[RMDB]
RNA sequence: GGGAACGACUCGAGUAGAGUCGAAAAACAGCAACCUAUUGAUUGGCUUUACGUGGAUAGGCUGCUGAGGGAUCCUCACUGAUUUGGUUGGCUCCCUCGUGUAUGCGGCGCGCGUAAGAGGAUGGCGAUAUCCAGCACGCUUCGGCGUGCUGGAUAUAAAAGAAACAACAACAACAAC
Reactivity to DMS in 0.01 (KOAc 150mM, MgCl2 10mM, bicine 150mM(pH8.5), 24C), signal-to-noise 1, nucleotides 027 to 126: a080c160a040g030c060a050a180c050c040u000a020u040u050g000a000u050u010g000g000c070u010u020u000a120c050g020u090g000g020a170u000a200g080g000c030u000g050c000u010g020a000g010g000g050a010u000c000c010u000c160a000c160u040g040a180u030u080u040g010g000u000u030g000g010c100u000c010c000c050u000c000g020u020g000u000a020u020g000c080g000g000c080g080c060g000c020g000u000a010a050g000a090g000g000a080u000g000g000c050g000
Reactivity to 2A3 in 0.01 (KOAc 150mM, MgCl2 10mM, bicine 150mM(pH8.5), 24C), signal-to-noise 2, nucleotides 027 to 126: a000c110a000g000c000a000a120c050c000u010a000u090u260g160a070u020u230g140g080c120u120u140u110a000c000g000u060g050g100a140u100a070g060g060c060u000g000c000u000g040a020g040g000g000a000u030c020c000u080c030a030c030u180g170a300u190u120u300g100g000u010u000g000g010c000u000c000c040c000u000c000g150u150g000u120a140u210g000c000g000g000c020g000c000g000c000g000u040a000a040g020a000g280g060a170u120g060g060c120g000
The data come from the RNA Mapping Database (RMDB), library OK1LIB. This 177-nucleotide RNA was probed chemically with DMS and 2A3. The DMS profile rests on 1,286 reads. The 2A3 profile rests on 465 reads. The reactions ran in a buffer of 150 mM KOAc, 10 mM MgCl2 and 150 mM bicine (pH 8.5), at 24 C. Reactivities are given for positions 27 through 126. 2A3 adducts were read by reverse transcription with SuperScript II with manganese.